[RMDB]
RNA sequence: GGGAACGACUCGAGUAGAGUCGAAAAGCAUUAGCAUAUGCAUUAAUAUUAUAAUCGGCAUUAGCAUGCUAGCAUAUGCGCCGCGGCGCGCGCUAUACGCGAUUAUACGAUUACGUACGUAAUUACGCCCCUCUUGCAUAUUCGUAUGCAAGAGGGGAAAAGAAACAACAACAACAAC
Reactivity to DMS in 0.01 (KOAc 150mM, MgCl2 10mM, bicine 150mM(pH8.5), 24C), signal-to-noise 3, nucleotides 027 to 126: g020c060a100u010u000a180g020c030a080u000a040u000g020c020a130u050u010a090a160u000a080u010u020a040u010a030a070u000c090g010g000c010a020u010u010a120g000c180a080u000g000c010u000a090g000c030a070u010a050u000g010c000g000c120c110g040c190g010g030c070g010c060g010c060g020c040u020a050u000a050c090g000c000g000a070u030u000a060u020a050c190g010a030u000u000a050c020g000u020a040c110g000u010a010a010u000u010a090c150g000
Reactivity to 2A3 in 0.01 (KOAc 150mM, MgCl2 10mM, bicine 150mM(pH8.5), 24C), signal-to-noise 3, nucleotides 027 to 126: g030c030a050u120u160a020g010c010a010u030a010u110g000c010a020u080u180a100a170u190a080u300u160a110u070a190a070u120c090g020g000c040a040u060u090a070g050c060a020u030g020c010u030a040g000c020a030u070a020u150g040c000g020c020c010g030c060g070g000c020g010c010g000c000g000c020u130a070u040a160c070g020c000g000a020u090u040a080u070a050c050g020a030u000u070a020c070g030u030a020c050g020u010a040a070u070u020a040c070g070